The record gives the reactivity of an RNA of 177 nucleotides to DMS and 2A3. It was measured as part of the RMDB library TTRDES.
[RMDB]
RNA sequence: GGGAACGACUCGAGUAGAGUCGAAAAGAUAUGGAAAUCCGAUAGACAUGAACGACGUCGGAAACGACGUCAAGUUCAACAGCUAUCUUUGGGAUUUCCUAAGUCAAAGUACUUCUUCGGAAGUACAGACAAAAGGUAGGUUCGCCUACCUUUUGUCAAAAGAAACAACAACAACAAC
Reactivity to DMS in 0.01 (KOAc 150mM, MgCl2 10mM, bicine 150mM(pH8.5), 24C), signal-to-noise 3, nucleotides 027 to 126: g010a050u010a300u000g000g000a000a010a000u000c000c000g010a020u000a000g010a110c110a240u010g000a010a010c000g000a030c010g020u000c000g010g000a110a090a090c000g000a020c000g010u000c000a020a050g030u000u010c000a070a100c300a190g020c080u000a040u000c010u020u000u000g010g020g000a030u000u000u000c000c000u010a000a080g000u000c020a140a090a140g000u000a010c000u010u000c000u000u020c200g040g020a000a000g020u000a000c010a130
Reactivity to 2A3 in 0.01 (KOAc 150mM, MgCl2 10mM, bicine 150mM(pH8.5), 24C), signal-to-noise 1, nucleotides 027 to 126: g000a000u030a020u120g000g000a010a010a000u000c010c020g010a010u020a020g090a070c150a280u150g010a010a010c000g010a000c000g000u000c000g000g000a010a030a020c030g000a000c000g000u000c010a000a000g000u000u000c020a070a060c080a140g020c010u030a020u020c000u170u210u170g140g000g010a000u000u010u010c010c000u010a120a000g030u010c020a180a060a060g020u010a000c000u020u020c000u040u100c300g150g010a000a000g000u000a000c000a010